This 177-nucleotide RNA was probed chemically with DMS and 2A3. 2A3 is a SHAPE reagent: it acylates the 2'-hydroxyl of flexible nucleotides of all four kinds. The RNA was probed in 150 mM KOAc, 10 mM MgCl2 and 150 mM bicine (pH 8.5) at 24 C. The 2A3 profile rests on 1,059 reads.
RNA sequence: GGGAACGACUCGAGUAGAGUCGAAAAGUACGUUAAUUACAAAGAUAAGAGAAGGUGCAUUGGCUUCAGCGAGGAUAUUUUUUGGAAAAUUUAUUGCAUAUUUUCUCCCCGAGGACCAUUAGUAGGCCGAGUAUACUUACUUCGGUAAGUAUACUCGAAAAGAAACAACAACAACAAC
Reactivity to DMS in 0.01 (KOAc 150mM, MgCl2 10mM, bicine 150mM(pH8.5), 24C), signal-to-noise 3, nucleotides 027 to 126: g010u000a040c070g020u010u020a070a060u000u020a090c050a100a110a120g020a120u020a070a090g020a080g010a070a020g010g020u000g000c030a070u010u000g020g000c040u000u010c050a020g030c100g030a080g020g010a080u000a000u000u010u020u000u020u030g000g000a040a040a070a040u010u010u000a040u020u010g010c060a070u000a040u000u000u000u000c040u000c030c010c010c050g020a080g010g000a060c040c020a050u000u000a100g000u000a040g010g000c120
Reactivity to 2A3 in 0.01 (KOAc 150mM, MgCl2 10mM, bicine 150mM(pH8.5), 24C), signal-to-noise 2, nucleotides 027 to 126: g030u000a020c070g020u010u100a120a020u250u090a070c070a080a130a040g100a190u100a140a040g020a040g030a090a080g010g050u010g010c020a030u030u100g010g000c000u050u100c030a020g050c050g040a010g010g060a000u050a050u030u100u030u030u100u180g050g000a030a100a010a020u130u220u050a180u070u170g000c020a000u040a030u190u070u050u000c030u080c000c000c000c000g020a040g010g020a010c040c020a050u040u010a040g140u040a020g060g000c020